[RMDB]
RNA sequence: GGGAACGACUCGAGUAGAGUCGAAAAUGAAAGGGAUCACCUACGGCACUAUGCUGCGUAUGACACCAAGGGUGCUGACUCAAGGAGAUAAGUCAGAAAUCAGUCUCAAUCUACACAUUGAGGAUGGAGCGGACAUUGGAUUCGUCCAAUGUCCGCUAAAAGAAACAACAACAACAAC
Reactivity to 2A3 in 0.01 (KOAc 150mM, MgCl2 10mM, bicine 150mM(pH8.5), 24C), signal-to-noise 1, nucleotides 027 to 126: u190g020a070a020a040g090g040g040a090u110c050a070c050c010u030a000c020g060g000c020a020c070u090a090u220g020c050u030g020c060g090u050a080u160g080a050c070a010c020c040a040a030g090g000g000u100g000c000u000g020a020c000u070c120a080a080g000g000a130g050a090u090a120a030g050u000c030a000g190a070a060a020u110c000a030g060u010c000u000c000a000a020u000c100u130a040c050a000c070a140u050u010g040a020g040g020a000u040g070g050
Reactivity to DMS in 0.01 (KOAc 150mM, MgCl2 10mM, bicine 150mM(pH8.5), 24C), signal-to-noise 1, nucleotides 027 to 126: u000g000a030a040a200g000g030g030a090u000c020a030c030c020u010a110c110g000g040c070a030c050u000a120u020g010c030u000g040c000g000u000a050u000g000a030c110a080c030c010a070a240g010g010g000u000g000c010u030g020a060c090u000c090a150a150g010g010a120g010a140u000a060a040g000u000c030a030g000a110a070a070u000c080a070g030u000c030u000c010a000a050u020c150u000a100c250a070c130a230u000u000g000a050g000g010a070u010g030g000